Structure probing data (2A3 and DMS) for a 177-nucleotide construct. For DMS, 2,594 sequencing reads were counted. Conditions: 150 mM KOAc, 10 mM MgCl2 and 150 mM bicine (pH 8.5), 24 C. DMS adducts were read by reverse transcription with MarathonRT. 2A3 adducts were read by reverse transcription with SuperScript II with manganese.
[RMDB]
RNA sequence: GGGAACGACUCGAGUAGAGUCGAAAAGAUAUGGACCGUAGGGAGCUCUCGUAUCGGAAACGAUACACGCGAGAGCAUCGAUCUCACGGUCCUAAGUCAAAGGAUAUUCUGUUCGCAGAAUAUCCAACAAGGAAUUGAACUUCGGUUCAAUUCCUUGAAAAGAAACAACAACAACAAC
Reactivity to 2A3 in 0.01 (KOAc 150mM, MgCl2 10mM, bicine 150mM(pH8.5), 24C), signal-to-noise 2, nucleotides 027 to 126: g010a000u030a000u030g000g000a010c010c010g020u010a060g000g000g030a030g000c010u000c000u000c010g010u010a000u000c010g000g000a010a000a030c000g000a000u010a020c090a070c180g290c200g020a030g000a010g040c000a020u150c020g000a000u000c010u010c010a010c010g020g000u020c000c000u000a010a000g010u000c030a080a100a110g010g010a010u000a010u000u000c000u000g030u030u120c300g070c110a000g000a010a000u010a000u050c000c010a000a010
Reactivity to DMS in 0.01 (KOAc 150mM, MgCl2 10mM, bicine 150mM(pH8.5), 24C), signal-to-noise 2, nucleotides 027 to 126: g010a040u000a080u010g000g000a010c010c010g030u000a020g000g010g000a020g030c000u000c000u000c010g000u000a010u000c000g000g000a000a020a040c000g030a000u000a000c030a100c300g020c260g010a010g000a020g020c020a160u000c160g010a000u010c010u000c150a020c010g000g000u000c000c000u000a000a050g000u000c000a110a110a120g000g010a000u000a010u000u000c000u000g010u010u020c230g000c000a010g010a000a010u000a000u000c000c020a060a060